[RMDB]
RNA sequence: GGGAACGACUCGAGUAGAGUCGAAAAUCUGUCCUCAUCCCCAGGAGGACUGGGUUAACAAAGCGCAAGCCCCCACGGCUGCAGCACUUCUCUUGCGGGAGAGAUAGUGUCACGCGGACUAGAGGUACGCGUAAAUUAUGUUCGCAUAAUUUACGCGAAAAGAAACAACAACAACAAC
Reactivity to DMS in 0.01 (KOAc 150mM, MgCl2 10mM, bicine 150mM(pH8.5), 24C), signal-to-noise 9, nucleotides 027 to 126: u010c050u010g010u000c000c000u000c010a050u010c050c010c010c040a270g000g000a020g000g000a020c020u000g010g000g020u000u000a100a120c140a060a100a100g010c050g010c150a100a130g000c020c020c010c010c020a090c140g000g010c010u000g010c050a160g000c010a020c010u000u000c000u000c000u000u000g010c200g010g000g010a120g000a020g000a030u010a010g020u000g000u010c070a110c180g010c020g010g010a060c060u010a080g010a070g010g000u010a130
Reactivity to 2A3 in 0.01 (KOAc 150mM, MgCl2 10mM, bicine 150mM(pH8.5), 24C), signal-to-noise 8, nucleotides 027 to 126: u000c010u020g010u000c000c000u010c010a110u130c020c000c010c000a010g010g030a010g010g000a010c030u060g030g000g000u060u060a130a050c050a110a140a040g020c040g000c060a060a050g020c010c010c000c010c010a030c040g020g000c000u020g000c010a010g020c000a000c010u020u000c010u010c010u030u140g200c110g060g170g010a020g010a000g010a030u170a070g030u030g030u070c050a030c150g010c020g020g010a050c010u030a030g020a020g130g020u090a040
An RNA of 177 nucleotides, treated with DMS and 2A3 and read out base by base.
Reactivities are given for positions 27 through 126.
Reactivities are rounded to 0.1 and cut off at 0 and 3.
Source: RMDB library OK2TST, as collected in RNAgym.
For DMS, 24,693 sequencing reads were counted.
2A3 adducts were read by reverse transcription with SuperScript II with manganese.
High 2A3 reactivity points to a flexible backbone, as in loops and unpaired stretches.